Structure probing data (2A3 and DMS) for a 177-nucleotide construct. 2A3 adducts were read by reverse transcription with SuperScript II with manganese. Conditions: 150 mM KOAc, 10 mM MgCl2 and 150 mM bicine (pH 8.5), 24 C. The DMS profile rests on 1,707 reads.
RNA sequence: GGGAACGACUCGAGUAGAGUCGAAAAGAUAUGGAUUCUGCCCUGACACGAGGAUCUCGGAAACGAGGGAGUGUAGGGAACUACAGAAUCCUAAGUCAAAACCUACUCCAGUUCGCUGGAGUAGGAACGUACGAAACUUGUUCGCAAGUUUCGUACGAAAAGAAACAACAACAACAAC
Reactivity to 2A3 in 0.01 (KOAc 150mM, MgCl2 10mM, bicine 150mM(pH8.5), 24C), signal-to-noise 2, nucleotides 027 to 126: g040a020u070a030u190g000g010a000u010u000c010u020g050c010c010c000u110g300a040c010a000c020g110a250g000g070a020u000c000u000c010g020g040a090a110a060c010g000a000g000g000g010a010g010u020g000u000a010g000g000g020a020a020c090u290a050c060a010g010a000a010u010c000c010u010a150a030g040u000c030a040a020a060a160c000c000u010a010c010u020c000c000a040g020u110u060c200g110c170u000g010g000a000g000u000a000g000g000a000a000
Reactivity to DMS in 0.01 (KOAc 150mM, MgCl2 10mM, bicine 150mM(pH8.5), 24C), signal-to-noise 2, nucleotides 027 to 126: g000a020u000a300u000g000g000a000u000u000c000u000g010c000c000c000u000g010a040c000a010c000g000a100g010g010a020u010c000u000c000g010g000a100a100a200c010g000a020g000g000g010a050g010u000g010u000a040g000g000g000a050a020c060u020a300c000a010g000a000a010u000c000c000u000a010a070g000u010c060a060a050a160a150c000c000u010a030c000u000c000c000a010g010u000u020c200g010c000u000g000g000a000g010u000a000g000g000a020a010